[RMDB]
RNA sequence: GGGAACGACUCGAGUAGAGUCGAAAAGCUGGGGCUUGGAGAGGCAGGAGCCGCUGGCCUGCAGACACACGCCGCCGGGCGGCUGGGUUCUCUGGAUAUGGGGAAACCGAUUUCCUUCUGGGGGAACCCCAUAGGUAUCGUUCGCGAUACCUAUGGGAAAAGAAACAACAACAACAAC
Reactivity to 2A3 in 0.01 (KOAc 150mM, MgCl2 10mM, bicine 150mM(pH8.5), 24C), signal-to-noise 1, nucleotides 027 to 126: g030c050u020g000g010g000g070c030u060u120g070g020a120g000a050g030g080c020a040g070g070a040g070c010c010g030c020u010g030g000c030c000u030g000c020a040g140a080c030a010c010a010c130g000c010c020g000c010c020g070g030g000c020g020g010c040u050g010g000g050u100u050c040u000c000u060g000g130a080u110a130u290g010g010g000g010a020a010a010c010c000g070a180u050u020u080c010c000u050u110c110u080g030g000g010g000g040a010a020c030
Reactivity to DMS in 0.01 (KOAc 150mM, MgCl2 10mM, bicine 150mM(pH8.5), 24C), signal-to-noise 4, nucleotides 027 to 126: g020c040u010g010g010g010g010c070u000u020g010g010a110g000a120g000g000c060a050g000g000a100g050c030c050g020c040u000g000g010c010c020u000g010c030a090g010a140c170a130c140a080c110g010c030c300g000c060c060g000g000g020c030g020g000c080u000g000g010g000u000u000c020u000c020u000g000g010a100u010a070u000g000g010g010g000a030a060a120c060c080g000a140u000u000u000c020c020u000u000c130u010g000g000g000g010g010a080a070c160

About this RNA:
This 177-nucleotide RNA was probed chemically with 2A3 and DMS. In probing experiments dimethyl sulfate is read out at A N1 and C N3, which are open when not base-paired. DMS adducts were read by reverse transcription with MarathonRT.